[RMDB]
About this RNA
Source: RMDB library RNAMAK, as collected in RNAgym. An RNA of 207 nucleotides, treated with 2A3 and DMS and read out base by base. For 2A3, 1,928 sequencing reads were counted.
RNA sequence: GGGAACGACUCGAGUAGAGUCGAAAACUGGACCGAUUCGUCGGUCCAGAAAAAAGCGUACUACUUAGGGAGCUGCAAACUACCCACCUCCCAAAUAGGAGAGGUUUAUAGCGAGGAUCUAAGUAUCGCAAAAAACGAGGCGUUUCGACGCCUCGAAGAAUUUGUACUACUUCGGUAGUACAAAUUCAAAAGAAACAACAACAACAAC
Reactivity to 2A3 in 0.01 (KOAc 150mM, MgCl2 10mM, bicine 150mM(pH8.5), 24C), signal-to-noise 3, nucleotides 027 to 156: c010u000g010g010a020c010c000g000a020u040u100c270g010u020c000g110g020u000c000c010a010g010a010a020a000a000a000a000g040c040g000u090a100c020u010a000c010u030u010a010g020g000g010a040g010c000u020g090c100a130a100a090c030u110a060c030c020c050a060c000c030u030c010c020c040a190a270a250u260a130g020g010a060g010a010g100g050u070u080u110a240u130a020g010c010g040a160g040g000a010u010c010u020a020a010g000u020a070u300c170g000c140a080a000a040a010a060a000c020g000a010g000g000c000g000u000u080u160c120g050a010c000g000c000c000u010c000g000a000a000
Reactivity to DMS in 0.01 (KOAc 150mM, MgCl2 10mM, bicine 150mM(pH8.5), 24C), signal-to-noise 1, nucleotides 027 to 156: c030u000g000g010a030c000c030g010a080u000u000c290g040u050c000g030g040u000c000c000a030g000a000a020a060a120a110a120g030c010g010u010a060c150u000a030c000u020u010a070g020g000g000a080g030c000u000g010c040a000a000a100c000u000a030c030c030c080a300c140c000u000c000c000c000a060a190a270u030a100g020g010a030g030a150g000g020u000u000u000a010u000a040g010c020g030a160g020g000a030u000c000u000a030a000g020u000a060u000c000g000c020a000a050a080a060a100a070c010g000a040g000g100c030g050u010u000u010c190g010a060c020g010c000c010u000c010g000a020a110
Description:
In probing experiments dimethyl sulfate is read out at A N1 and C N3, which are open when not base-paired. The DMS profile rests on 1,954 reads.